[RMDB]
Structure probing data (DMS and 2A3) for a 177-nucleotide construct. Source: RMDB library M2PK50, as collected in RNAgym. Conditions: 150 mM KOAc, 10 mM MgCl2 and 150 mM bicine (pH 8.5), 24 C.

RNA sequence: GGGAACGACUCGAGUAGAGUCGAAAAAACAGCUGCUUCGGCAGCUGUUAACCCUCGCGGCUCGAGGCUGCACGAGCCGGACAGCAGCCAGUCCGCGAGCUAUAGCCUUGGAGUUCGCUCCAAGGAACUACUCCUCCUACUUCGGUAGGAGGAGUAGAAAAGAAACAACAACAACAAC
Reactivity to DMS in 0.01 (KOAc 150mM, MgCl2 10mM, bicine 150mM(pH8.5), 24C), signal-to-noise 2, nucleotides 027 to 126: a010a000c010a000g040c000u000g040c000u000u000c280g030g010c000a010g050c000u000g010u000u000a020a120c010c000c000u010c020g020c030g000g000c090u000c060g000a120g020g020c000u000g000c040a110c090g000a100g030c090c110g020g010a070c160a120g010c010a000g020c000c010a110g000u000c000c010g000c010g010a000g010c090u000a090u010a150g000c000c000u000u000g010g000a010g000u010u000c210g010c020u000c010c000a000a000g000g000a030a050
Reactivity to 2A3 in 0.01 (KOAc 150mM, MgCl2 10mM, bicine 150mM(pH8.5), 24C), signal-to-noise 2, nucleotides 027 to 126: a000a000c010a000g030c000u020g020c000u040u100c200g100g000c010a010g000c000u010g000u010u010a000a000c000c000c010u000c010g010c000g020g000c030u040c070g140a160g000g000c000u020g020c020a020c210g070a050g160c050c010g010g080a060c050a020g000c000a000g000c010c000a000g050u000c010c000g000c010g000a000g000c010u140a140u180a270g010c000c000u000u000g010g000a000g020u080u110c130g160c060u000c000c000a000a000g010g010a000a000